[RMDB]
Background: Source: RMDB library M2RFPK, as collected in RNAgym. Structure probing data (DMS and 2A3) for a 207-nucleotide construct.
RNA sequence: GGGAACGACUCGAGUAGAGUCGAAAACGGUUACGCCUUCUUUACCGUUAUCAAGGAAGUUACUCGGCCAUGCUAAGGGAAGCAUUAUUCCUUAGGCGCAUGUCGCCGCCAGCAUGGUGUGAGGGGAAAAAGUAUGCUGGGUUCGCCCAGCAUACAAUCAUAUAUAUCUGUUCGCAGAUAUAUAUGAAAAAGAAACAACAACAACAAC
Reactivity to DMS in 0.01 (KOAc 150mM, MgCl2 10mM, bicine 150mM(pH8.5), 24C), signal-to-noise 4, nucleotides 027 to 156: c020g010g010u000u000a040c050g020c090c020u000u010c030u000u000u000a070c030c020g020u000u000a030u000c100a050a050g000g030a040a050g010u000u010a090c020u000c000g000g000c020c010a010u010g020c010u000a180a130g010g010g020a030a070g010c150a160u000u000a160u000u010c010c000u000u000a110g020g020c000g030c040a090u010g030u010c020g030c010c020g040c100c080a070g020c010a020u000g000g030u000g000u010g010a050g000g010g000g000a060a040a090a110a150g010u000a000u000g010c000u000g000g010g030u000u010c300g020c000c000c000a010g000c000a000u000a000c000a050a100
Reactivity to 2A3 in 0.01 (KOAc 150mM, MgCl2 10mM, bicine 150mM(pH8.5), 24C), signal-to-noise 8, nucleotides 027 to 156: c010g000g020u040u050a050c080g070c010c020u060u030c020u030u080u050a030c010c010g170u070u080a060u140c080a040a020g060g020a040a030g040u100u080a060c010u010c020g020g000c000c000a000u000g010c010u040a040a070g020g000g010a020a010g030c060a160u090u150a090u150u140c010c000u030u090a060g010g000c010g000c050a120u250g110u280c030g010c040c010g000c010c020a010g000c000a010u010g030g020u040g100u110g020a030g000g010g010g050a020a140a020a000a000g000u010a000u000g000c000u000g010g010g000u030u040c090g080c030c000c000a000g000c000a000u000a000c000a000a000

The DMS profile rests on 14,927 reads.
For 2A3 the reverse transcriptase was SuperScript II with manganese.